[RMDB]
An RNA of 207 nucleotides, treated with 2A3 and DMS and read out base by base.
RNA sequence: GGGAACGACUCGAGUAGAGUCGAAAAUGUGUCUGUGUGUAUUGAGAGAGAAAGAUUUGCAAUUGACACCAUUGUGGGAGCUGGUAAAUCUAAAAUCUGCAAGGCAAGCCAGCAGGCUAAAAAGUCAAUGUCAAUGUUGCAGCCUUGAGUCCAAAUAAGGAUUUUAAUCAUUCGUGAUUAAAAUCCUAAAAGAAACAACAACAACAAC
Reactivity to 2A3 in 0.01 (KOAc 150mM, MgCl2 10mM, bicine 150mM(pH8.5), 24C), signal-to-noise 2, nucleotides 027 to 156: u120g040u010g010u010c040u010g080u000g000u010g050u110a100u100u210g050a120g000a010g000a000g030a120a000a000g010a050u060u110u110g000c010a030a060u060u030g010a000c030a000c040c050a090u060u290g040u180g110g030g000a100g000c010u000g000g000u030a080a000a010u040c050u080a010a030a080a180u040c040u040g020c010a010a000g000g000c010a030a000g020c010c000a000g020c020a020g040g010c050u110a220a050a030a020a020g070u060c050a030a040u040g020u020c000a000a070u100g040u130u040g060c030a030g000c000c010u020u030g010a020g050u000c050c010a050a080a060u250a140
Reactivity to DMS in 0.01 (KOAc 150mM, MgCl2 10mM, bicine 150mM(pH8.5), 24C), signal-to-noise 1, nucleotides 027 to 156: u000g030u020g020u020c000u010g030u000g000u020g030u000a100u030u000g010a090g010a120g000a150g000a070a080a110g000a040u000u000u000g000c040a130a070u000u020g010a070c040a020c050c020a250u000u000g000u000g010g020g010a130g040c040u010g020g030u000a070a060a050u020c000u000a100a050a100a130u000c100u020g050c050a040a010g040g010c030a130a250g010c040c020a070g070c180a080g020g030c040u000a020a040a110a090a080g020u010c030a050a120u000g000u000c050a080a110u000g000u010u000g020c010a150g010c020c070u000u030g010a150g020u000c020c010a010a050a130u000a150
Conditions: 150 mM KOAc, 10 mM MgCl2 and 150 mM bicine (pH 8.5), 24 C. It was measured as part of the RMDB library OK3TST.